RNA sequence: GGGAACGACUCGAGUAGAGUCGAAAAACCUUUGUGGACCGUCGAGCUAUACUCCCCACCGAUUAAUCAACCCAUUGGGUUGACUAAUCGAGGUAUAGCUUAGACAGCGUCCACUCUGGUAAACCCUUCUGAUCAUCUUCGGAUGAUCAGAAGGGAACUGAUUAGAACAGUUCGCUGUUCUAAUCAGAAAAGAAACAACAACAACAAC
Reactivity to DMS in 0.01 (KOAc 150mM, MgCl2 10mM, bicine 150mM(pH8.5), 24C), signal-to-noise 1, nucleotides 027 to 156: a010c010c050u010u010u000g010u000g000g000a010c020c020g010u000c000g010a010g010c000u010a060u000a000c030u010c270c220c060c100a300c270c000g000a020u000u000a030a000u000c000a020a040c030c000c020a300u000u010g040g110g000u000u000g000a020c010u010a020a020u000c010g010a210g000g000u000a010u000a000g020c000u000u010a000g040a030c000a070g050c100g040u000c000c000a020c000u010c030u000g010g000u000a060a070a110c000c000c020u000u000c000u020g020a000u000c000a010u020c010u010u030c300g020g020a050u000g000a000u000c000a010g000a010a020g020g050g020a010a000
Reactivity to 2A3 in 0.01 (KOAc 150mM, MgCl2 10mM, bicine 150mM(pH8.5), 24C), signal-to-noise 3, nucleotides 027 to 156: a000c010c000u020u010u010g000u000g000g000a010c010c020g000u000c000g010a000g000c010u010a010u000a020c020u110c030c070c020c010a040c020c000g000a000u000u000a010a010u000c000a000a000c010c020c090a180u110u300g000g000g000u000u000g000a000c000u000a000a000u010c000g000a010g010g000u010a000u000a000g000c030u000u000a050g000a000c010a010g040c050g080u000c000c000a000c000u010c000u000g000g000u070a110a070a080c000c000c000u000u000c000u000g000a000u000c000a000u010c000u040u100c300g140g000a000u000g000a000u000c010a000g000a000a000g000g000g000a000a000
Structure probing data (DMS and 2A3) for a 207-nucleotide construct. It was measured as part of the RMDB library RNAMAK. For DMS, 2,369 sequencing reads were counted. For DMS the reverse transcriptase was MarathonRT. Conditions: 150 mM KOAc, 10 mM MgCl2 and 150 mM bicine (pH 8.5), 24 C.